[RMDB]
RNA sequence: GGGAACGACUCGAGUAGAGUCGAAAAGUCGAGCGAAUGGAUUAAGAGCUUGCUCUUAUGAAGUUAGCGGCGGACGGGUGAGUAACACGUGGGUAACCUGCCCAUAAGACUGGGAUAACUCCGGGAAUCUUAAAGAUUGGUUCGCCAAUCUUUAAGAAAAAGAAACAACAACAACAAC
Reactivity to DMS in 0.01 (KOAc 150mM, MgCl2 10mM, bicine 150mM(pH8.5), 24C), signal-to-noise 4, nucleotides 027 to 126: g020u000c020g010a290g030c010g000a020a010u000g010g010a150u000u000a010a010g010a010g010c030u010u000g000c010u000c000u000u000a010u000g000a300a170g000u000u000a070g000c030g020g020c070g000g000a050c080g000g020g000u000g000a120g020u010a060a070c090a060c170g020u000g000g000g010u000a130a090c110c070u010g000c010c000c010a030u000a080a100g000a090c070u010g000g000g010a180u000a050a070c080u000c050c030g000g000g000a120a110
Reactivity to 2A3 in 0.01 (KOAc 150mM, MgCl2 10mM, bicine 150mM(pH8.5), 24C), signal-to-noise 2, nucleotides 027 to 126: g010u020c050g020a030g010c000g030a040a000u030g000g010a000u010u020a020a010g010a000g040c050u070u120g030c000u070c000u010u010a020u010g000a000a010g020u000u020a010g010c050g230g160c040g010g010a010c020g040g000g010u060g040a140g030u070a090a000c020a010c160g010u090g010g000g000u010a090a070c030c050u080g000c040c000c000a020u030a030a020g040a030c040u000g000g000g010a080u060a100a060c030u060c040c020g000g020g050a030a040
An RNA of 177 nucleotides, treated with DMS and 2A3 and read out base by base. DMS adducts were read by reverse transcription with MarathonRT. For DMS, 3,258 sequencing reads were counted. The 2A3 profile rests on 1,689 reads. In probing experiments dimethyl sulfate is read out at A N1 and C N3, which are open when not base-paired.